RNA sequence: GGGAACGACUCGAGUAGAGUCGAAAAGAUAUGGAGGGUAAAAAUUCGCAUGGACCCCUAAUCUCCUUACAUCGGAAACGAUGUAAGGAGAUUAGGCCAUGAACUACGAAUAAUACCCUCCUAAGUCCAUAACACUAAAGUUCGCUUUAGUGUUAUGAAAAGAAACAACAACAACAAC
Reactivity to DMS in 0.01 (KOAc 150mM, MgCl2 10mM, bicine 150mM(pH8.5), 24C), signal-to-noise 7, nucleotides 027 to 126: g010a090u000a300u010g000g010a010g000g020g020u000a000a030a130a160a080u000u000c010g010c000a020u000g000g010a230c300c300c030c010u000a010a010u000c000u000c000c000u000u000a010c000a010u000c000g010g000a140a120a230c010g010a000u000g000u000a000a000g000g000a000g010a000u000u000a010g010g000c020c010a020u000g000a080a100c190u020a300c020g000a010a010u000a060a300u000a020c000c000c000u000c000c000u000a010a090g000u000c040